[RMDB]
RNA sequence: GGGAACGACUCGAGUAGAGUCGAAAAAUAAACAGCCUUAGCGUAUGUUUUCAUCCCAACAAAUAAUACGCGAGGUAACAAUGACUGUACGCGUAUAAAUCAGUCAAUAACGCUAAGGUAAAAAAAAUGAAUCAUCUAGUUUCGACUAGAUGAUUCAAAAAGAAACAACAACAACAAC
Reactivity to DMS in 0.01 (KOAc 150mM, MgCl2 10mM, bicine 150mM(pH8.5), 24C), signal-to-noise 1, nucleotides 027 to 126: a090u020a050a090a040c140a110g000c020c000u000u000a020g010c000g050u000a060u000g000u000u000u000u000c200a180u000c030c000c000a120a080c100a070a050a110u020a060a060u000a000c010g010c010g010a190g030g000u000a020a090c290a040a060u000g030a000c000u000g000u010a040c010g000c000g040u000a000u010a060a070a140u000c010a000g000u000c020a200a060u020a030a060c000g000c000u000a000a010g000g020u000a000a000a000a020a020a050a000a050
Reactivity to 2A3 in 0.01 (KOAc 150mM, MgCl2 10mM, bicine 150mM(pH8.5), 24C), signal-to-noise 2, nucleotides 027 to 126: a000u200a000a070a030c030a030g000c000c000u000u010a000g000c030g010u060a100u290g080u030u080u050u130c040a060u050c000c020c020a020a020c010a010a040a010u170a040a020u020a010c010g020c010g000a060g150g090u030a030a010c040a020a070u030g020a000c010u020g000u070a030c000g000c020g000u000a010u040a020a150a050u050c000a000g000u000c000a000a080u080a020a000c000g010c000u000a000a000g020g000u000a030a000a000a010a010a000a010a030

Structure probing data (DMS and 2A3) for a 177-nucleotide construct. The data come from the RNA Mapping Database (RMDB), library M2PK90. DMS adducts were read by reverse transcription with MarathonRT. The DMS profile rests on 1,154 reads. The RNA was probed in 150 mM KOAc, 10 mM MgCl2 and 150 mM bicine (pH 8.5) at 24 C.